[RMDB]
RNA sequence: GGGAACGACUCGAGUAGAGUCGAAAAGAUAUGGAGUAUGGGGAGACGCUACAUUCGGAAACGAAUGGUCGUCAUCGAUCCCGCUACUCCUAAGUCAAACGAUGUCACCGUUCGCGGUGACAUCGAACUCAGAUAAUAUGUUCGCAUAUUAUCUGAGAAAAGAAACAACAACAACAAC
Reactivity to 2A3 in 0.01 (KOAc 150mM, MgCl2 10mM, bicine 150mM(pH8.5), 24C), signal-to-noise 7, nucleotides 027 to 126: g040a040u080a060u150g000g000a000g010u040a070u230g040g000g010g000a120g000a020c020g030c050u230a190c110a020u000u010c000g040g000a060a070a050c020g010a000a000u020g020g040u080c020g020u010c020a070u210c080g090a100u070c010c000c020g020c030u000a000c000u000c000c010u020a130a010g060u030c060a100a020a090c030g000a000u000g000u000c000a000c000c000g020u090u100c300g000c010g090g000u000g000a000c000a000u000c000g000a000a010
Reactivity to DMS in 0.01 (KOAc 150mM, MgCl2 10mM, bicine 150mM(pH8.5), 24C), signal-to-noise 9, nucleotides 027 to 126: g000a040u000a300u010g000g010a010g020u000a010u010g010g010g000g000a100g000a020c020g010c130u010a110c010a010u000u000c000g010g000a100a100a200c010g000a020a010u000g000g000u000c010g000u000c020a100u000c210g010a290u010c010c010c010g010c100u000a000c010u000c000c010u000a030a090g000u000c030a110a110a250c010g000a010u000g010u000c000a010c000c000g010u000u010c220g020c010g000g000u000g000a000c000a000u000c000g000a050a110